[RMDB]
RNA sequence: GGGAACGACUCGAGUAGAGUCGAAAAAAUACUUGAUUUGCUCAUCUUUUUUCUACUCCAUGUGGUAUGUACUAUAAUUAAUCAAACACCUACAUUUUCAGCCAAUGCUAUCUUUUACAUUUUAGUGUAAAAUUAUGUAAGUGCUAUACCUUGCAUAAGGUCGAUACUAUUUCGAUAGUAUCGACCUAAAAGAAACAACAACAACAAC
Reactivity to 2A3 in 0.01 (KOAc 150mM, MgCl2 10mM, bicine 150mM(pH8.5), 24C), signal-to-noise 2, nucleotides 027 to 156: a000a000u160a020c030u040u060g010a020u130u030u050g050c040u050c040a110u110c070u020u130u000u010u040u020c010u060a040c010u010c000c030a110u080g020u040g040g040u020a010u060g060u020a040c030u020a030u050a230a110u200u140a060a110u100c040a000a130a060c040a050c080c050u110a030c030a100u080u140u070u160c040a030g010c000c040a110a010u090g000c020u030a040u150c060u000u050u070u060a060c030a080u050u040u200u280a090g010u000g010u000a030a060a100a100u070u040a030u060g010u010a010a020g000u000g020c000u020a010u090a130c000c000u000u030g040c000a020u000a050